[RMDB]
RNA sequence: GGGAACGACUCGAGUAGAGUCGAAAAGAAGAGAAGUGAGUAAACGCCUAUGCGGUAUAAGCACAGCCCGUCAAAAGGCGUGCGGCGAGGGCACCAGAAGCUGUGCUUAUAACUGGGCCCUCGAAGAAAUUACCGGACGGUUCGCCGUCCGGUAAUUAAAAGAAACAACAACAACAAC
Reactivity to DMS in 0.01 (KOAc 150mM, MgCl2 10mM, bicine 150mM(pH8.5), 24C), signal-to-noise 2, nucleotides 027 to 126: g000a100a060g000a110g010a100a090g000u000g000a140g000u000a050a150a070c060g020c000c010u000a140u060g020c030g000g020u000a070u010a000a050g000c010a000c000a060g010c000c010c030g030u010c300a130a030a160a090g000g000c000g030u000g000c170g000g020c020g000a000g000g000g000c000a120c000c000a020g000a200a140g000c000u000g000u010g010c000u010u010a060u030a060a140c020u000g020g000g010c010c000c000u000c000g010a070a050g010a040
Reactivity to 2A3 in 0.01 (KOAc 150mM, MgCl2 10mM, bicine 150mM(pH8.5), 24C), signal-to-noise 2, nucleotides 027 to 126: g110a080a020g100a000g000a170a000g080u090g130a030g000u130a050a190a060c000g000c000c000u140a200u230g010c020g000g010u060a140u080a150a000g010c000a000c010a010g000c000c000c000g040u050c040a010a090a000a000g000g000c020g000u020g000c010g060g030c010g000a030g000g000g000c140a300c090c000a000g010a040a000g030c060u110g040u050g010c000u010u040a150u050a040a040c000u000g020g000g010c000c000c000u000c000g000a000a000g010a010
Source: RMDB library OK1LIB, as collected in RNAgym. Structure probing data (DMS and 2A3) for a 177-nucleotide construct. Values are in units of 0.01, from 0 to 300, in steps of 10. For DMS, 2,780 sequencing reads were counted.